[RMDB]
RNA sequence: GGGAACGACUCGAGUAGAGUCGAAAAGACACAAAUGCCACUCAGUGGGAUUUCAUACGGUAUAAUAAAGCUCUCUAGGUCAGAGCUGGCCUAGCUGUUGGAUACUCAGUGUAUAAAUUCGUGUCGAGGGUAAGCUAACGUUCGCGUUAGCUUACCCAAAAGAAACAACAACAACAAC
Reactivity to DMS in 0.01 (KOAc 150mM, MgCl2 10mM, bicine 150mM(pH8.5), 24C), signal-to-noise 1, nucleotides 027 to 126: g000a020c010a010c020a050a030a040u000g000c140c030a070c090u000c000a120g000u020g020g000g000a300u000u000u000c120a000u040a040c140g000g070u000a150u000a110a080u000a010a090a150g000c090u000c000u010c160u020a120g000g080u170c150a010g000a070g000c020u000g000g000c270c050u000a010g000c050u000g000u000u000g000g000a000u000a190c000u000c000a160g010u000g000u000a050u000a110a050a100u000u000c030g040u000g000u000c040g000a030
Reactivity to 2A3 in 0.01 (KOAc 150mM, MgCl2 10mM, bicine 150mM(pH8.5), 24C), signal-to-noise 2, nucleotides 027 to 126: g000a000c010a000c000a060a060a030u160g090c050c020a030c030u270c080a090g010u040g040g120g000a060u000u000u090c020a030u070a070c030g010g000u070a080u010a280a120u090a060a030a010g060c000u000c000u040c090u190a070g040g050u090c050a040g020a060g110c060u000g000g000c050c000u020a040g010c020u020g000u100u070g040g010a010u040a090c000u000c010a000g050u000g010u090a090u060a030a120a000u070u040c030g000u000g010u000c020g010a030